Background:
An RNA of 207 nucleotides, treated with 2A3 and read out base by base. The 2A3 profile rests on 1,477 reads.
[RMDB]
RNA sequence: GGGAACGACUCGAGUAGAGUCGAAAAUGUCGGAUCGCUUGAGUCCAGGAGUUCUGGGCUGCACUGAGCUAUGUCGAUCGGGUGUCCGCACUAAGUUCGGUAUCAAUAUGGUGUUCCUGGGGGAGCCUCGGAUCACCAGGUUGCUCUAAGGAGGGGUGUUUCUACACAAGUUCGCUUGUGUAGAAACAAAAGAAACAACAACAACAAC
Reactivity to 2A3 in 0.01 (KOAc 150mM, MgCl2 10mM, bicine 150mM(pH8.5), 24C), signal-to-noise 2, nucleotides 027 to 156: u240g050u000c000g000g000a050u040c050g000c040u010u070g080a010g000u010c010c030a020g030g050a130g080u250u200c020u030g000g030g000c000u030g000c030a080c100u090g010a010g000c020u070a030u100g090u090c030g030a090u070c040g000g010g070u070g010u040c060c050g020c000a020c070u070a040a070g050u060u060c040g030g010u060a090u140c070a070a060u120a060u140g010g000u010g030u030u030c020c040u090g010g000g000g050g090a090g010c000c000u040c050g000g010a030u010c000a000c050c000a000g000g010u020u020g020c040u030c030u100a040a100g070g010a010g000g000g000g010u030